[RMDB]
RNA sequence: GGGAACGACUCGAGUAGAGUCGAAAAAGCUGUCCACAUCAUACUCAUGCUGUUCUACCUGUCAGAGAUAUAUUACAUGGUAAAUGUGAGUGAUAAAGGAGGAUAAGUUCUUUGUCAGAAUGAGGACAUUUCGGUUCUGUCAUCAUGCCUGAAAUGAGAGUCGCCUAAAUUUCGAUUUAGGCGACUCAAAAGAAACAACAACAACAAC
Reactivity to 2A3 in 0.01 (KOAc 150mM, MgCl2 10mM, bicine 150mM(pH8.5), 24C), signal-to-noise 1, nucleotides 027 to 156: a000g030c000u010g000u000c020c010a010c020a070u120c000a090u060a110c000u000c060a030u070g010c070u060g110u140u000c020u010a010c050c000u140g040u110c070a070g030a040g120a180u070a030u000a020u210u070a040c000a000u260g000g000u030a150a060a040u080g000u020g000a040g020u010g020a020u190a030a160a000g050g100a070g000g010a010u020a120a040g000u010u000c000u150u120u160g080u080c000a000g040a030a030u020g000a060g040g010a000c090a030u110u110u070c100g120g000u050u130c000u040g030u020c000a050u010c000a060u120g050c000c000u030g130a090a000a000u300g070a140
The record gives the reactivity of an RNA of 207 nucleotides to 2A3.
The reactions ran in a buffer of 150 mM KOAc, 10 mM MgCl2 and 150 mM bicine (pH 8.5), at 24 C.
For 2A3 the reverse transcriptase was SuperScript II with manganese.